[RMDB]
RNA sequence: GGGAACGACUCGAGUAGAGUCGAAAAUUGGGCGGCGGCGACGAUCUGAUCAUCAAGCCGACGACCCAGGCCGCAGGCAGCAACCUGCCGGCAGUGCCCAACGUGGCCGCCGACGCCGGCGUAGCGGGCGGAAUGUGACUUUCGAGUCACAUUCCGCAAAAGAAACAACAACAACAAC
Reactivity to 2A3 in 0.01 (KOAc 150mM, MgCl2 10mM, bicine 150mM(pH8.5), 24C), signal-to-noise 1, nucleotides 027 to 126: u100u000g010g010g030c030g000g000c020g000g030c030g030a060c120g020a040u000c080u160g090a090u130c040a020u000c010a010a050g000c020c000g000a000c000g080a100c000c000c000a000g000g050c020c020g000c010a040g090g010c040a060g000c000a140a120c000c000u000g030c070c000g000g000c020a020g080u120g080c000c000c000a030a150c100g060u160g040g030c000c010g030c060c030g060a090c160g170c140c050g000g020c000g030u060a030g000c020g000g060
Reactivity to DMS in 0.01 (KOAc 150mM, MgCl2 10mM, bicine 150mM(pH8.5), 24C), signal-to-noise 2, nucleotides 027 to 126: u010u000g030g000g010c000g000g000c010g020g000c000g020a210c300g000a030u010c060u010g010a160u010c250a040u000c020a110a300g030c010c000g000a010c030g000a080c000c000c010a010g020g000c010c000g030c010a040g020g000c050a050g000c220a090a230c050c040u010g000c080c010g020g010c000a110g030u000g000c000c010c010a130a100c130g000u000g020g010c070c030g050c050c000g020a100c140g010c150c010g000g000c030g020u000a210g020c030g010g020